Chemical mapping of a 207-nucleotide RNA with 2A3 and DMS.

RNA sequence: GGGAACGACUCGAGUAGAGUCGAAAAGGCUGUGUUGUGGCGGGGGCGAAACAGGAUCGAAAAGGGUGUAAAGAUCGCUCUUUUACUCGGCAUGAUACCACCGUUAUCGGGUCAACAGAGUAGUUGCUAGGGGAACGGGUGUUCGCACCCGUUCCAACUACAAAAGUACGUUCGCGUACUUUUGUAGAAAAGAAACAACAACAACAAC
Reactivity to 2A3 in 0.01 (KOAc 150mM, MgCl2 10mM, bicine 150mM(pH8.5), 24C), signal-to-noise 3, nucleotides 027 to 156: g030g010c030u020g010u010g020u090u040g040u080g040g040c030g020g000g020g020g010c000g060a000a020a010c040a030g070g020a070u070c060g040a010a000a030a040g030g050g000u080g030u100a100a140a010g100a070u150c000g000c040u010c000u020u040u010u040a130c050u030c000g000g000c020a020u080g020a000u050a050c020c010a020c000c010g080u060u060a060u150c040g010g010g030u020c000a020a000c020a040g090a020g020u100a010g010u030u040g040c050u080a060g000g110g040g010a000a000c000g000g000g010u000g020u020u030c100g020c040a000c000c010c000g000u000u010c000c000a000a000
Reactivity to DMS in 0.01 (KOAc 150mM, MgCl2 10mM, bicine 150mM(pH8.5), 24C), signal-to-noise 2, nucleotides 027 to 156: g020g020c010u010g050u000g030u010u000g000u000g000g030c010g010g020g010g010g020c040g030a070a070a050c080a130g020g010a040u000c020g020a050a070a020a080g000g010g030u000g010u010a080a120a130g000a150u010c030g030c060u000c010u000u000u010u000a040c010u000c020g010g000c010a080u000g010a130u000a100c040c020a130c000c020g010u000u010a040u000c120g000g000g020u000c000a060a070c060a150g010a040g040u000a090g000u000u010g010c020u000a190g020g000g030g030a010a010c000g010g030g050u010g020u000u000c270g030c000a040c000c000c010g000u000u010c000c000a020a050
Source information
For DMS the reverse transcriptase was MarathonRT. The reactions ran in a buffer of 150 mM KOAc, 10 mM MgCl2 and 150 mM bicine (pH 8.5), at 24 C. Reactivities are given for positions 27 through 156.